[RMDB]
RNA sequence: GGGAACGACUCGAGUAGAGUCGAAAAGCUUUUCAGUUCGCUGAAAAGCAAAGAAAAGAUCGAAAGAUCAACGCAGAAACGGAGCGAAAACCGUAACAAAAAAAACACCGAGGUUCGCCUCGGUGAAUCAACCUUAAACGUUCGCGUUUAAGGUUGAAAAAGAAACAACAACAACAAC
Reactivity to DMS in 0.01 (KOAc 150mM, MgCl2 10mM, bicine 150mM(pH8.5), 24C), signal-to-noise 1, nucleotides 027 to 126: g000c000u000u000u000u030c010a020g000u000u030c230g030c010u000g000a010a020a010a010g040c000a050a060a060g000a050a070a040a060g000a000u010c000g000a090a100a170g000a010u000c040a090a300c100g000c010a060g010a090a090a010c000g000g000a050g020c040g000a040a030a140a090c000c060g000u000a050a060c080a000a000a020a230a100a120a080a230c000a030c000c000g000a000g050g010u010u020c180g040c000c000u000c000g020g000u010g000a000a000
Reactivity to 2A3 in 0.01 (KOAc 150mM, MgCl2 10mM, bicine 150mM(pH8.5), 24C), signal-to-noise 1, nucleotides 027 to 126: g000c000u030u000u020u000c000a000g000u020u100c130g000c070u000g000a000a020a020a000g000c020a010a050a000g020a000a090a010a020g020a010u010c020g050a040a040a020g000a000u000c010a010a080c020g000c040a010g140a090a170a000c000g040g000a120g000c070g150a030a030a020a040c000c000g020u070a050a030c120a060a000a060a060a000a000a000a000c000a000c000c000g000a000g040g000u040u060c170g130c000c000u000c020g020g010u000g000a000a010
Annotation: Chemical mapping of a 177-nucleotide RNA with DMS and 2A3. 2A3 adducts were read by reverse transcription with SuperScript II with manganese. The data come from the RNA Mapping Database (RMDB), library M2PK50. The RNA was probed in 150 mM KOAc, 10 mM MgCl2 and 150 mM bicine (pH 8.5) at 24 C. DMS adducts were read by reverse transcription with MarathonRT. For 2A3, 1,591 sequencing reads were counted.